[RMDB]
RNA sequence: GGGAACGACUCGAGUAGAGUCGAAAAGAUAUGGACACAUAUAUGGCUGAUGACCGAAAUCGGAAACGAUUUCGCAAGGCCUAUAGUGUCCUAAGUCAAAAGCCAAGGAAACUUCGGUUUCCUUGGCCGAUGUAGCUUGCUUCGGCAAGCUACAUCGAAAAGAAACAACAACAACAAC
Reactivity to 2A3 in 0.01 (KOAc 150mM, MgCl2 10mM, bicine 150mM(pH8.5), 24C), signal-to-noise 2, nucleotides 027 to 126: g010a010u050a020u170g000g000a020c000a000c070a000u060a010u040a080u300g010g000c000u050g050a300u160g050a120c080c050g000a010a000a020u000c010g000g040a020a050a040c020g010a000u000u010u000c000g000c030a120a180g020g000c010c000u040a020u030a020g010u020g000u000c000c000u010a080a010g010u000c020a060a080a160a070g010c000c000a000a000g020g000a010a010a000c030u100u170c300g170g010u010u010u000c010c000u000u000g010g010c020
Reactivity to DMS in 0.01 (KOAc 150mM, MgCl2 10mM, bicine 150mM(pH8.5), 24C), signal-to-noise 3, nucleotides 027 to 126: g020a040u000a300u010g010g000a000c000a010c000a060u010a050u010a030u010g040g010c000u000g010a130u020g010a230c300c000g000a020a010a000u000c010g000g000a160a080a170c020g010a020u000u010u000c000g040c020a060a100g010g000c010c010u010a020u010a000g000u000g010u000c000c010u000a020a040g010u010c020a080a120a060a180g000c000c000a000a010g000g010a010a000a000c000u000u020c290g000g010u000u000u000c000c000u010u000g000g010c010

The record gives the reactivity of an RNA of 177 nucleotides to 2A3 and DMS. It was measured as part of the RMDB library TTRDES. High DMS reactivity at an A or C suggests that its Watson-Crick edge is free. Reactivities are given for positions 27 through 126. For 2A3, 4,594 sequencing reads were counted.